Background:
This 177-nucleotide RNA was probed chemically with 2A3 and DMS. 2A3 adducts were read by reverse transcription with SuperScript II with manganese. Source: RMDB library OK2TRN, as collected in RNAgym.

RNA sequence: GGGAACGACUCGAGUAGAGUCGAAAACGGGUGCCGGAAACAACCUUGCAGCGGAUCGACUUGCCGUCGCAGGCUUCAGCCACCAGAUGCAGUUUUCCGUCAUCGAUCAACAGGCGAUGGCCCGGCAAUUAGCCCUUUUAUUCGUAAAAGGGCUAAUAAAAGAAACAACAACAACAAC
Reactivity to 2A3 in 0.01 (KOAc 150mM, MgCl2 10mM, bicine 150mM(pH8.5), 24C), signal-to-noise 3, nucleotides 027 to 126: c030g060g070g050u050g050c040c020g030g030a000a050a060c050a040a100c050c030u070u150g000c020a020g010c020g000g040a070u100c090g100a120c070u100u200g030c030c020g040u090c050g010c060a040g000g040c020u130u110c040a010g020c010c000a030c020c010a030g010a140u050g030c020a020g020u010u000u100u080c020c020g030u030c010a020u010c010g020a080u070c030a040a170c030a100g100g000c020g110a100u040g000g040c000c010c000g030g010c000a010
Reactivity to DMS in 0.01 (KOAc 150mM, MgCl2 10mM, bicine 150mM(pH8.5), 24C), signal-to-noise 7, nucleotides 027 to 126: c090g020g000g020u000g000c050c020g010g010a090a060a070c140a090a110c090c040u000u010g040c000a040g010c080g000g000a080u000c100g010a060c100u000u010g010c010c010g010u000c200g020c120a110g000g000c030u010u010c080a060g000c060c020a080c070c030a100g010a100u000g000c060a080g000u000u000u000u000c050c050g010u000c020a020u010c010g010a070u010c100a090a090c170a100g000g010c020g000a050u000g010g010c030c020c010g010g000c120a070